[RMDB]
RNA sequence: GGGAACGACUCGAGUAGAGUCGAAAAUUGCCGCUGAGCGCCAAACUCUUCAGCGGAGUGUCCAGUUGGCCGAUGAGGAGCGGCAAAAGCUUCGCGAUCAGCUGGUGAAUCUGCAGGCGCACGUCGAGACCGCUGAGUGCUUCGGCACUCAGCGGUCAAAAGAAACAACAACAACAAC
Reactivity to 2A3 in 0.01 (KOAc 150mM, MgCl2 10mM, bicine 150mM(pH8.5), 24C), signal-to-noise 2, nucleotides 027 to 126: u010u100g100c000c000g000c060u010g060a010g080c080g040c050c000a090a290a150c100u080c050u210u180c010a000g000c070g000g000a010g000u040g100u120c000c000a000g010u000u020g020g050c000c000g060a060u120g130a100g040g020a010g000c000g050g020c050a040a040a040a040g000c000u050u200c060g020c000g100a090u000c000a010g000c000u000g070g000u000g040a070a030u020c000u020g090c090a010g040g000c000g000c000a000c000g210u260c040g000a040
About this RNA: This 177-nucleotide RNA was probed chemically with 2A3. The RNA was probed in 150 mM KOAc, 10 mM MgCl2 and 150 mM bicine (pH 8.5) at 24 C. It was measured as part of the RMDB library OK1LIB. The 2A3 profile rests on 560 reads.